Source: RMDB libraries RFM100 and RFMREP, as collected in RNAgym. The record gives the reactivity of an RNA of 177 nucleotides to DMS and 2A3. The RNA was probed in 150 mM KOAc, 10 mM MgCl2 and 150 mM bicine (pH 8.5) at 24 C. DMS adducts were read by reverse transcription with MarathonRT.
RNA sequence: GGGAACGACUCGAGUAGAGUCGAAAAAAGACGCGAUGAAUACGUCCCUGUUCUUUGUACACACCGCCCGUCGUUAUCGAAGAUGGAGUCAGGCGCGAACAAGCGAGAGCGAGUGAGUGCAGGAUUCAUAUAUAGGAACAUUCGUGUUCCUAUAUAUAAAAGAAACAACAACAACAAC
Reactivity to DMS in 0.01 (KOAc 150mM, MgCl2 10mM, bicine 150mM(pH8.5), 24C), signal-to-noise 9, nucleotides 027 to 126: a060a050g000a070c060g010c100g010a090u020g010a120a080u020a080c070g000u000c010c020c010u010g000u000u000c020u010u000u010g010u010a060c090a090c070a060c040c030g010c020c010c020g010u010c040g010u010u000a080u010c070g010a070a080g000a120u010g010g010a060g010u010c020a040g010g000c060g010c010g000a130a040c060a050a270g000c010g000a120g000a140g000c010g000a280g010u000g000a210g010u000g000c010a020g000g000a040u010u010c040
Reactivity to 2A3 in 0.01 (KOAc 150mM, MgCl2 10mM, bicine 150mM(pH8.5), 24C), signal-to-noise 9, nucleotides 027 to 126: a000a000g090a020c050g020c050g060a100u120g080a100a070u120a100c020g040u030c000c010c000u020g050u070u010c020u060u070u060g060u050a010c040a000c000a010c030c010g030c010c020c000g070u030c020g030u060u060a080u150c050g050a060a040g040a090u150g030g020a030g030u020c020a030g050g010c000g000c010g030a040a020c030a070a010g010c000g010a050g010a010g080c000g010a040g030u020g010a020g000u010g000c010a010g010g040a030u070u050c050